[RMDB]
RNA sequence: GGGAACGACUCGAGUAGAGUCGAAAAUAUUAUUGGAAAAUAUGCCACAAGUGUUGCGUAGUGAGUUGAAUGACUUACAUGCUCAAACUGAAUCAAACAAGAGCAAUAUUGAGCUUAAAGCAAAUAAAGCUGAAAGUGAAGCCAAAAAUGCAAUGGCGAUACUGUUAGGGUUCGCCCUAACAGUAUCAAAAGAAACAACAACAACAAC
Reactivity to 2A3 in 0.01 (KOAc 150mM, MgCl2 10mM, bicine 150mM(pH8.5), 24C), signal-to-noise 4, nucleotides 027 to 156: u100a020u090u090a060u050u080g030g050a000a070a070a080u120a060u080g040c030c020a070c030a110a070g030u040g030u140u060g000c040g010u040a030g020u030g030a030g010u040u070g170a170a090u240g010a020c010u000u030a010c010a050u050g000c010u000c030a030a050a020c040u060g040a060a090u070c040a060a060a120c050a120a040g030a010g100c010a020a000u070a090u130u050g020a020g010c000u050u090a020a060a020g010c020a050a060a240u110a050a150a020g000c010u010g050a040a010a000g060u070g060a040a000g000c010c000a020a050a070a020a020u110g010c040a030a090u050g020g010c020
Reactivity to DMS in 0.01 (KOAc 150mM, MgCl2 10mM, bicine 150mM(pH8.5), 24C), signal-to-noise 3, nucleotides 027 to 156: u000a080u000u010a100u000u000g020g010a150a090a110a170u000a080u010g010c020c040a080c070a070a110g020u000g020u000u000g060c000g000u000a150g030u000g010a060g010u000u010g040a130a100u000g040a040c030u010u000a030c020a150u000g030c010u010c040a020a090a150c090u000g020a040a130u000c070a100a080a150c090a070a120g000a100g040c040a000a070u000a090u000u010g010a110g030c020u010u000a030a140a120g030c030a080a060a180u000a060a130a090g000c060u000g000a060a050a160g020u000g010a040a090g040c000c010a000a090a080a090a090u000g000c060a080a200u000g010g020c200
This 207-nucleotide RNA was probed chemically with 2A3 and DMS. Source: RMDB library OK3TST, as collected in RNAgym. The 2A3 profile rests on 2,787 reads. For 2A3 the reverse transcriptase was SuperScript II with manganese. The reactions ran in a buffer of 150 mM KOAc, 10 mM MgCl2 and 150 mM bicine (pH 8.5), at 24 C. For DMS the reverse transcriptase was MarathonRT. The DMS profile rests on 5,047 reads.